[RMDB]
RNA sequence: GGGAACGACUCGAGUAGAGUCGAAAAACACCAAAACUGAAAACGGAAGGCAAACCUUCCACGACGAUACUUACUUUCCUUUGAUCGUCGUUACUACUGGCAUAGCCACAAAGGAGAACAAACAUGAGCGCGGACACUGACUUCGGUCAGUGUCCAACAUACCCGACUCCUUCGGGAGUCGGGUAUGAAAAGAAACAACAACAACAAC
Reactivity to 2A3 in 0.01 (KOAc 150mM, MgCl2 10mM, bicine 150mM(pH8.5), 24C), signal-to-noise 2, nucleotides 027 to 156: a000c080a070c030c020a120a090a050a090c160u190g070a100a070a010a030c090g000g000a000a000g060g000c110a110a140a150c000c010u000u000c000c010a000c000g000a000c010g000a000u090a150c030u090u010a080c020u010u090u080c000c010u040u010u010g030a000u020c000g010u000c000g010u020u080a010c030u000a010c020u030g000g000c040a270u110a190g000c020c010a030c050a040a020a000g030g010a060g020a050a060c050a110a120a040c090a150u230g050a030g140c140g060c120g060g000a000c000a000c000u000g000a000c010u020u010c160g080g000u000c030a000g000u000g000u010c000c000a000a000